[RMDB]
RNA sequence: GGGAACGACUCGAGUAGAGUCGAAAAGGGCACUUCGCAAUGUGUGCUCAAACAUUGCUUAUUCAAACACGCUUCACAAUGUGCGACAAAGAAACAUUGUUAUAAGAGCUAAUGUUUUAACAUUGGCAAAACCGAGUUAGCUUCGGCUAACUCGGAACAAAUGCGAUUCGUUCGCGAAUCGCAUUUGAAAAGAAACAACAACAACAAC
Reactivity to 2A3 in 0.01 (KOAc 150mM, MgCl2 10mM, bicine 150mM(pH8.5), 24C), signal-to-noise 7, nucleotides 027 to 156: g030g030g010c000a000c020u020u010c040g010c020a010a020u020g010u000g010u020g020c140u120c180a010a020a010c010a010u010u020g000c010u130u180a170u270u260c110a050a130a040c080a000c070g000c010u010u010c020a000c000a010a000u000g000u000g010c020g050a070c150a080a180a030g060a030a060a000c000a010u000u000g020u070u050a140u050a080a100g050a010g000c000u000a000a000u010g040u020u180u070u140a100a040c000a000u000u000g000g000c000a030a040a000a030c000c000g000a000g000u000u000a000g000c000u030u030c240g010g000c000u000a000a010c000u000c000g000g010a000a000
Reactivity to DMS in 0.01 (KOAc 150mM, MgCl2 10mM, bicine 150mM(pH8.5), 24C), signal-to-noise 2, nucleotides 027 to 156: g030g000g030c000a050c060u000u000c080g040c100a150a100u000g030u020g020u010g020c030u000c000a140a080a050c110a100u000u000g000c000u000u000a130u020u000c070a160a120a200c060a070c100g000c060u010u000c110a100c030a060a080u010g010u000g000c030g050a190c110a090a090a090g000a150a060a060c020a040u000u000g000u000u000a120u020a080a080g000a300g000c000u000a020a020u000g020u000u010u000u000a070a120c000a020u000u000g000g060c000a040a010a050a100c020c000g020a080g040u000u010a000g020c020u000u010c290g060g000c010u000a000a000c000u000c000g010g060a000a020
Conditions: 150 mM KOAc, 10 mM MgCl2 and 150 mM bicine (pH 8.5), 24 C. Chemical mapping of a 207-nucleotide RNA with 2A3 and DMS. Reactivities are given for positions 27 through 156. 2A3 adducts were read by reverse transcription with SuperScript II with manganese. The data come from the RNA Mapping Database (RMDB), library M2RFPK.